Structure probing data (DMS and 2A3) for a 207-nucleotide construct.
The data come from the RNA Mapping Database (RMDB), library OK3TST.
For 2A3, 2,886 sequencing reads were counted.
High DMS reactivity at an A or C suggests that its Watson-Crick edge is free.
For DMS, 6,521 sequencing reads were counted.
For 2A3 the reverse transcriptase was SuperScript II with manganese.
The reactions ran in a buffer of 150 mM KOAc, 10 mM MgCl2 and 150 mM bicine (pH 8.5), at 24 C.
RNA sequence: GGGAACGACUCGAGUAGAGUCGAAAAGGAGAGAAGGGAAUGACUCACCUGAUAUCGAUAAGGGAGAAGAAAUUUUUAAACAUGAACGUGUGGUAUGACUCGGGGUGGUCACGGGGAAUCCCAACGUAUUCGUCCAUGUUGACUGUGUGAGCCACUCUAUCUGAUUCUGAUUCGUCAGAAUCAGAUAAAAAGAAACAACAACAACAAC
Reactivity to DMS in 0.01 (KOAc 150mM, MgCl2 10mM, bicine 150mM(pH8.5), 24C), signal-to-noise 3, nucleotides 027 to 156: g010g000a070g000a050g010a130a100g020g020g000a090a110u010g010a080c030u000c020a080c030c030u000g010a130u000a130u000c090g000a210u000a070a070g000g020g010a080g000a070a060g000a040a060a090u000u040u000u010u010a070a090a070c040a060u010g010a040a030c040g010u010g010u010g030g020u000a060u000g020a100c010u000c040g030g020g020g010u010g020g030u000c010a090c070g020g010g010g010a140a090u000c030c010c020a060a060c090g010u010a150u000u000c050g010u000c020c010a060u010g010u000u000g010a070c060u000g020u010g000u010g010a090g030c010c010a030c090u000c060
Reactivity to 2A3 in 0.01 (KOAc 150mM, MgCl2 10mM, bicine 150mM(pH8.5), 24C), signal-to-noise 3, nucleotides 027 to 156: g040g010a010g010a000g020a030a050g020g000g040a010a110u130g050a060c010u040c050a140c020c040u080g070a100u070a090u220c090g020a030u100a100a080g020g020g020a030g020a060a020g060a020a110a060u140u140u100u170u200a120a110a060c040a030u060g040a020a000c040g020u050g040u040g110g020u070a040u100g020a030c020u020c060g010g000g000g000u040g020g020u050c050a020c070g010g000g000g010a000a030u040c010c000c010a020a030c020g050u090a090u080u170c040g010u000c020c010a040u040g000u030u040g070a090c070u060g020u020g030u010g100a020g000c010c020a030c010u020c020